[RMDB]
RNA sequence: GGGAACGACUCGAGUAGAGUCGAAAAGCUGCAGCCCAGCCAGGCCGCGCCGGCAGAGGGGGUCUCCCAACCUGCCCCGGCGCGCGGGGAUUUCGCCUACGCCGCCCCGGCUCCUCCGGACGGGGCGCAGAAGUUGAGUUUUCGAACUCAACUUCUGAAAAGAAACAACAACAACAAC
Reactivity to DMS in 0.01 (KOAc 150mM, MgCl2 10mM, bicine 150mM(pH8.5), 24C), signal-to-noise 4, nucleotides 027 to 126: g010c060u000g020c050a130g020c040c040c030a130g000c060c130a080g010g020c060c020g020c010g020c020c020g010g010c200a050g020a210g010g000g010g000g010u000c140u000c010c010c010a130a110c050c020u000g000c060c080c040c010g010g010c000g020c020g010c040g010g010g000g010a170u000u010u010c080g000c020c020u000a110c170g010c100c020g020c010c000c000c000g010g010c060u000c050c030u010c060c060g000g010a090c010g000g000g010g020c030g010
Reactivity to 2A3 in 0.01 (KOAc 150mM, MgCl2 10mM, bicine 150mM(pH8.5), 24C), signal-to-noise 2, nucleotides 027 to 126: g040c050u080g030c030a060g040c030c010c010a010g030c040c000a050g050g000c070c000g000c010g000c000c020g030g000c070a030g070a120g140g060g050g000g120u050c130u090c110c020c000a010a050c020c020u100g040c020c000c000c050g000g030c010g000c010g020c020g010g030g010g010a010u040u210u160c050g000c010c010u030a080c060g040c040c010g000c000c000c010c020g000g020c020u030c010c030u030c010c030g000g000a010c000g000g000g000g030c020g000
An RNA of 177 nucleotides, treated with DMS and 2A3 and read out base by base. For 2A3, 3,040 sequencing reads were counted.